[RMDB]
An RNA of 207 nucleotides, treated with 2A3 and read out base by base. Reactivities are given for positions 27 through 156. 2A3 adducts were read by reverse transcription with SuperScript II with manganese. The reactions ran in a buffer of 150 mM KOAc, 10 mM MgCl2 and 150 mM bicine (pH 8.5), at 24 C.

RNA sequence: GGGAACGACUCGAGUAGAGUCGAAAACUCAAAAAAACAAAACAAAAAACAUGAAGAGAAGUUCUGUAUUCUCUCCCUGAGUUGCAGUGGAUCAUCUUUUGCGUCCUAUGUUAGAACCCCACUUUGGAGACAUUGCUCCACCAAUACUGGUUUACAGCUCACACCAAUUGUUCGCAAUUGGUGUGAGAAAAGAAACAACAACAACAAC
Reactivity to 2A3 in 0.01 (KOAc 150mM, MgCl2 10mM, bicine 150mM(pH8.5), 24C), signal-to-noise 1, nucleotides 027 to 156: c020u040c030a050a020a020a000a000a120a020c150a080a130a100a040c140a050a130a090a040a010a010c100a190u160g110a070a010g010a020g010a050a000g050u180u200c110u220g010u130a110u050u010c010u000c010u030c000c020c000u040g040a020g020u000u020g030c020a000g040u020g030g010a020u030c000a020u000c060u010u180u130u090g010c030g010u000c020c000u070a040u050g020u000u030a050g010a200a080c040c000c020c010a020c040u140u090u100g030g000a010g020a020c020a040u000u140g020c010u000c000c030a020c010c030a110a110u100a170c080u150g110g000u210u190u210a030c090a110g160